[RMDB]
RNA sequence: GGGAACGACUCGAGUAGAGUCGAAAAUAAUUGGAGUGAGAUCCUUCCUAAUAGGACCUGCCUCUUGAUCAAUGGGCAGUGUAUGGAGCCCGUCAAUGAUCAAUUUUUCAACGGGAUCACUCUGGGCACUGCCAUCUACUUUCGAGUAGAUGGCAGUAAAAGAAACAACAACAACAAC
Reactivity to DMS in 0.01 (KOAc 150mM, MgCl2 10mM, bicine 150mM(pH8.5), 24C), signal-to-noise 3, nucleotides 027 to 126: u050a080a090u020u020g010g000a010g010u000g010a070g040a100u000c010c010u000u000c050c030u030a100a140u100a140g010g000a030c100c010u000g020c000c010u000c290u000u020g010a110u010c160a050a050u010g000g020g010c000a010g030u010g040u020a070u050g000g000a090g020c000c000c000g000u030c060a020a050u020g000a010u000c280a090a090u010u010u010u000u010c060a100a050c030g000g010g000a240u000c020a020c020u010c000u000g000g000g020c170
Reactivity to 2A3 in 0.01 (KOAc 150mM, MgCl2 10mM, bicine 150mM(pH8.5), 24C), signal-to-noise 6, nucleotides 027 to 126: u280a010a060u120u190g020g000a000g020u020g010a050g030a090u000c010c000u010u030c020c010u120a200a120u150a210g030g010a020c000c000u010g000c010c000u110c060u080u130g190a240u200c180a170a110u140g020g000g000c000a010g020u020g030u070a100u200g010g050a010g020c000c000c000g030u040c030a000a070u040g000a010u060c130a190a240u220u130u040u040u030c010a010a000c000g000g010g000a010u040c000a000c000u000c010u010g010g030g020c090
The record gives the reactivity of an RNA of 177 nucleotides to DMS and 2A3.
DMS adducts were read by reverse transcription with MarathonRT.
The DMS profile rests on 4,948 reads.
Conditions: 150 mM KOAc, 10 mM MgCl2 and 150 mM bicine (pH 8.5), 24 C.
The data come from the RNA Mapping Database (RMDB), library OK1LIB.
2A3 adducts were read by reverse transcription with SuperScript II with manganese.
The 2A3 profile rests on 3,771 reads.